[RMDB]
RNA sequence: GGGAACGACUCGAGUAGAGUCGAAAAAAGAUGCCAAGUGGUUCGGAGCGGGAGAAGGGAGAAUCGGUUGUCCCAUUCCGGGAAGAGGCGCCAACUUUCCAGGCAUUCCGAAAGAGGCAAGUGCAUCGACUGAGUCAGAAUUCGUUCUGACUCAGUCAAAAGAAACAACAACAACAAC
Reactivity to 2A3 in 0.01 (KOAc 150mM, MgCl2 10mM, bicine 150mM(pH8.5), 24C), signal-to-noise 1, nucleotides 027 to 126: a010a000g040a030u020g000c050c000a110a080g110u040g070g080u060u020c010g000g010a070g050c040g030g030g000a200g030a090a060g060g050g010a070g070a070a070u090c060g160g000u090u140g090u060c000c050c010a020u260u090c050c060g010g020g000a030a020g070a040g070g060c000g020c030c000a030a080c000u030u020u050c020c010a030g100g070c000a090u010u050c010c010g010a060a000a030g190a050g090g010c030a020a070g040u080g100c030a020u070c070
Reactivity to DMS in 0.01 (KOAc 150mM, MgCl2 10mM, bicine 150mM(pH8.5), 24C), signal-to-noise 3, nucleotides 027 to 126: a040a040g000a070u000g010c030c010a140a150g000u010g020g020u010u000c030g000g000a200g010c040g000g010g000a050g010a100a090g010g000g000a090g000a070a090u010c080g020g000u010u000g000u000c010c010c000a210u000u000c100c060g000g010g020a060a110g010a090g010g010c100g010c060c040a060a140c070u000u010u000c030c020a140g020g000c080a120u000u000c050c020g010a030a110a110g000a150g010g000c050a040a080g030u000g010c020a050u020c120

Structure probing data (2A3 and DMS) for a 177-nucleotide construct. DMS adducts were read by reverse transcription with MarathonRT. For DMS, 1,928 sequencing reads were counted. It was measured as part of the RMDB library OK2TST. The reactions ran in a buffer of 150 mM KOAc, 10 mM MgCl2 and 150 mM bicine (pH 8.5), at 24 C. 2A3 adducts were read by reverse transcription with SuperScript II with manganese.